[RMDB]
RNA sequence: GGGAACGACUCGAGUAGAGUCGAAAAACGUUGAUAUGGAUUUACUCCGAGGAGACGAACUACCAGGAACAGGGGAAACUCUACCCGUGGCGUCUCCGUUUGACGAGUAAGUCCUAAGUCAACAUGCGGCCAUCAACGUUCGCGUUGAUGAAAAGAAACAACAACAACAAC
Reactivity to 2A3 in 0.01 (KOAc 150mM, MgCl2 10mM, bicine 150mM(pH8.5), 24C), signal-to-noise 9, nucleotides 027 to 129: a000c090g000u000u000g010a000u000a000u040g000g000a000u000u000u000a000c000u000c010c010g010a060g010g000a010g030a000c010g010a030a030c060u180a070c130c010a010g000g010a150a040c040a110g000g000g000g000a000a000a000c000u010c000u030a060c010c000c020g160u010g010g000c000g000u000c000u000c010c000g010u100u070u080g000a000c000g000a000g000u000a000a000g000u000c000c000u000a000a000g000u000c000a000a000c000a010u120g070c070g090g020c020
Reactivity to DMS in 0.01 (KOAc 150mM, MgCl2 10mM, bicine 150mM(pH8.5), 24C), signal-to-noise 9, nucleotides 027 to 129: a080c160g030u000u020g020a040u020a000u030g020g030a000u010u000u010a000c010u010c000c010g030a060g000g010a020g010a000c020g000a090a040c070u010a290c050c010a090g050g010a120a140c160a080g000g000g000g000a000a030a030c020u030c010u020a150c190c060c010g050u000g000g000c000g000u010c000u000c020c010g020u010u030u040g000a130c300g010a030g010u000a030a000g000u040c000c010u010a020a040g000u020c000a040a010c000a070u020g040c100g000g000c050
Chemical mapping of a 170-nucleotide RNA with 2A3 and DMS. 2A3 adducts were read by reverse transcription with SuperScript II with manganese. For 2A3, 78,919 sequencing reads were counted. The data come from the RNA Mapping Database (RMDB), library 15KLIB. For DMS the reverse transcriptase was MarathonRT.